[RMDB]
RNA sequence: GGGAACGACUCGAGUAGAGUCGAAAACAGAAGUCCUAGGCAUCGUUCCUGCAUCCGAUGUCGAAGCAAUGGCGCGGUCCUAGGCAUCGGCGGUGUCAAAGCAAUGGCGCAGACCUCAGGCACCGAGCUCCUAUACUAACUUCGGUUAGUAUAGGAGAAAAGAAACAACAACAACAAC
Reactivity to 2A3 in 0.01 (KOAc 150mM, MgCl2 10mM, bicine 150mM(pH8.5), 24C), signal-to-noise 8, nucleotides 027 to 126: c030a020g070a060a000g130u040c000c000u010a000g010g010c070a010u020c010g010u010u010c000c000u000g000c010a040u010c030c030g300a300u250g180u300c100g000a040a000g000c010a030a250u210g010g000c020g000c010g010g000u000c000c000u000a010g000g030c010a010u030c030g150g000c000g010g000u000g000u010c030a040a000a020g000c030a040a090u300g020g000c230g000c250a100g040a260c010c000u030c060a000g010g000c000a010c000c000g000a020g010
Reactivity to DMS in 0.01 (KOAc 150mM, MgCl2 10mM, bicine 150mM(pH8.5), 24C), signal-to-noise 4, nucleotides 027 to 126: c060a100g000a030a050g020u010c000c000u000a020g000g010c130a030u000c000g020u000u000c010c000u000g010c020a110u010c030c010g010a160u010g000u010c080g010a040a070g010c020a060a080u010g000g000c060g000c010g020g010u000c010c000u010a020g000g020c010a020u010c100g010g020c030g000g000u000g010u000c020a110a160a100g000c030a100a030u010g010g020c010g020c210a090g010a160c020c000u000c040a050g000g000c020a010c000c000g000a070g000